[RMDB]
RNA sequence: GGGAACGACUCGAGUAGAGUCGAAAAGGCAUACGGAUCUGCUGACAUGUUUUACUACCCAGCUCACCAACAAGUGGCGUAGUACCAUUCGUCAAGACACUUAUCGCUACUUGCUUUGCGGCACAAGUAAUACCCAGGCUUUCGAGCCUGGGUAUUAAAAAGAAACAACAACAACAAC
Reactivity to DMS in 0.01 (KOAc 150mM, MgCl2 10mM, bicine 150mM(pH8.5), 24C), signal-to-noise 3, nucleotides 027 to 126: g000g000c010a020u010a070c100g010g020a070u000c010u000g000c080u000g020a070c050a020u020g010u010u000u010u000a060c120u020a070c040c040c000a120g000c040u000c030a050c120c090a030a130c160a010a050g000u010g000g020c080g020u000a000g010u000a070c140c100a170u000u020c140g040u020c110a090a110g010a140c260a010c030u000u010a020u090c010g000c040u030a000c000u000u000g000c150u030u020u000g000c080g010g000c040a100c240a140a130g010
Reactivity to 2A3 in 0.01 (KOAc 150mM, MgCl2 10mM, bicine 150mM(pH8.5), 24C), signal-to-noise 3, nucleotides 027 to 126: g050g000c030a020u080a130c070g010g060a050u050c010u040g030c040u000g030a000c030a030u040g030u010u070u030u010a050c020u070a040c010c010c010a010g050c050u040c010a050c000c010a040a040c000a040a040g030u010g000g000c020g000u010a010g030u010a060c020c120a160u100u120c070g110u140c140a060a030g060a000c040a000c050u080u130a080u140c040g000c020u000a000c010u040u000g060c000u070u030u110g030c040g010g020c000a020c000a060a020g130

An RNA of 177 nucleotides, treated with DMS and 2A3 and read out base by base. For 2A3 the reverse transcriptase was SuperScript II with manganese. The reactions ran in a buffer of 150 mM KOAc, 10 mM MgCl2 and 150 mM bicine (pH 8.5), at 24 C. Source: RMDB library OK1LIB, as collected in RNAgym.